RNA sequence: GGGAACGACUCGAGUAGAGUCGAAAAAGGGUGAAACACAUUCUAAUAACAAUGUCUCGUUAUGAGAAGAGUGUGAGUUACUAUUGUGGAUCUUAAUAGUAACUAAUUCUAGGUCUACAUUUCACCAGACAAUGGAUUCUUUCGAGGAUCUAUUGUCAAAAGAAACAACAACAACAAC
Reactivity to DMS in 0.01 (KOAc 150mM, MgCl2 10mM, bicine 150mM(pH8.5), 24C), signal-to-noise 9, nucleotides 027 to 126: a060g010g000g020u000g000a010a020a050c010a010c010a060u000u000c000u010a110a040u020a050a050c120a120a100u030g010u030c130u010c100g010u010u030a030u030g000a080g010a050a030g000a060g010u000g010u000g010a070g010u000u010a040c030u010a040u010u000g010u010g010g000a060u010c080u010u010a020a010u000a020g000u010a040a040c130u030a030a040u000u010c110u000a060g000g000u000c030u010a040c060a100u000u000u000c000a010c010c010a160
Reactivity to 2A3 in 0.01 (KOAc 150mM, MgCl2 10mM, bicine 150mM(pH8.5), 24C), signal-to-noise 9, nucleotides 027 to 126: a000g120g000g000u010g000a010a020a000c010a000c000a010u010u000c010u030a100a080u110a140a060c110a100a170u220g180u070c040u030c070g140u190u160a090u300g050a040g020a100a010g010a020g000u000g000u010g010a020g010u040u040a030c030u030a040u040u050g050u080g080g060a060u020c020u060u100a030a030u020a060g080u030a050a060c040u050a050a080u100u060c060u070a030g020g060u020c020u030a030c010a040u010u020u010c020a020c010c000a000